[RMDB]
RNA sequence: GGGAACGACUCGAGUAGAGUCGAAAAGAUAUGGAACUCUCUGCAUAGACAUCGAUCGCUAGUCGGAAACGACUAGCGGGAGUCUGUGCAGAGGAGUUCCUAAGUCAAAGCUCACUUCGGUGAGCAAGCUAAGUAACAUCUUCGGAUGUUACUUAGCAAAAGAAACAACAACAACAAC
Reactivity to 2A3 in 0.01 (KOAc 150mM, MgCl2 10mM, bicine 150mM(pH8.5), 24C), signal-to-noise 3, nucleotides 027 to 126: g020a020u090a050u200g000g000a000a010c000u000c000u000c000u000g000c000a000u020a010g010a010c030a300u280c180g140a060u110c020g000c010u010a010g020u000c000g010g000a070a090a070c010g000a000c000u010a010g010c010g000g010g000a010g000u000c010u010g000u000g000c000a000g000a000g010g000a000g000u010u010c000c010u000a040a000g000u000c070a120a070a070g000c000u010c010a000c000u060u160c300g150g000u010g010a000g000c020a000a010
Reactivity to DMS in 0.01 (KOAc 150mM, MgCl2 10mM, bicine 150mM(pH8.5), 24C), signal-to-noise 4, nucleotides 027 to 126: g000a060u010a300u000g010g000a010a000c000u000c000u010c000u010g000c000a010u000a010g020a030c000a300u000c230g010a090u010c000g030c000u000a000g010u010c010g000g010a140a120a260c000g010a010c000u000a000g010c010g000g010g010a020g000u000c000u000g030u000g010c000a010g000a010g000g020a030g010u000u000c000c000u000a000a080g010u000c050a080a140a180g000c000u000c000a010c000u000u020c260g030g010u000g000a000g020c000a020a030